An RNA of 207 nucleotides, treated with 2A3 and read out base by base. As a SHAPE reagent, 2A3 marks flexible, mostly unpaired nucleotides at the ribose 2'-OH.

[RMDB]
RNA sequence: GGGAACGACUCGAGUAGAGUCGAAAACAAACACAAAGCAGCAACGGAGUACCGGAUGCACAAGCAACAACAAUCUACUAGAACAAGAGUGACUUGUUCGUAUAUAGCGCCGAUAUACGUAGGUAAAGCAAGUGUAUCGCUGCAAGAACGGCGCAAACGCUCGUGCUACGUUCGCGUAGCACGAGCGAAAAGAAACAACAACAACAAC
Reactivity to 2A3 in 0.01 (KOAc 150mM, MgCl2 10mM, bicine 150mM(pH8.5), 24C), signal-to-noise 1, nucleotides 027 to 156: c030a010a060a000c120a000c010a120a120a000g000c000a000g020c000a010a120c000g000g060a050g100u110a300c040c020g000g000a000u000g030c000a000c000a050a050g010c070a000a130c010a080a000c010a160a000u060c000u020a040c000u090a070g040a040a030c000a010a000g100a120g150u190g180a140c020u010u000g000u000u000c030g030u000a000u000a000u000a000g000c000g030c000c000g000a000u000a000u000a000c000g010u000a010g000g070u120a160a080a000g020c020a020a070g000u000g020u010a000u010c000g000c000u000g000c000a000a010g060a160a040c000g010g050c010g000c070a020a030a000